Source: RMDB libraries RFM100 and RFMREP, as collected in RNAgym. Chemical mapping of a 177-nucleotide RNA with DMS and 2A3. For 2A3 the reverse transcriptase was SuperScript II with manganese.
RNA sequence: GGGAACGACUCGAGUAGAGUCGAAAACCACCGUCGCCGCCAUGUACAAUUCUCAAACUCUGACUUCUUGGAGGCAAUUCUUCCAAUUUGUUCCAACAUCACAAAACAAAACACAAACUGUUCCAAUCAAUGAAAUCUUAUUCGUAAGAUUUCAUUGAAAAGAAACAACAACAACAAC
Reactivity to DMS in 0.01 (KOAc 150mM, MgCl2 10mM, bicine 150mM(pH8.5), 24C), signal-to-noise 5, nucleotides 027 to 126: c000c000a090c080c080g030u000c050g000c020c030g010c020c020a040u000g020u000a050c120a090a120u010u000c020u010c050a060a070a110c080u000c040u000g010a110c060u000u000c050u010u000g010g020a070g000g000c200a090a090u020u010c030u010u000c020c010a040a050u010u010u010g010u000u000c030c030a060a080c080a020u010c060a050c080a050a040a050a060c090a040a040a050a050c100a040c120a040a050a060c130u010g010u000u000c010c010a050a190u000
Reactivity to 2A3 in 0.01 (KOAc 150mM, MgCl2 10mM, bicine 150mM(pH8.5), 24C), signal-to-noise 9, nucleotides 027 to 126: c000c000a010c020c020g060u050c030g010c010c000g010c010c010a040u070g030u060a060c050a090a130u130u040c040u020c020a090a110a070c040u030c030u080g060a100c020u070u030c010u050u090g020g010a020g030g000c010a020a090u110u020c010u040u000c010c010a050a120u050u020u100g080u060u010c020c010a040a050c020a100u130c060a020c030a080a070a070a020c050a030a080a070a010c090a050c020a030a140a030c060u060g040u030u000c000c010a020a040u010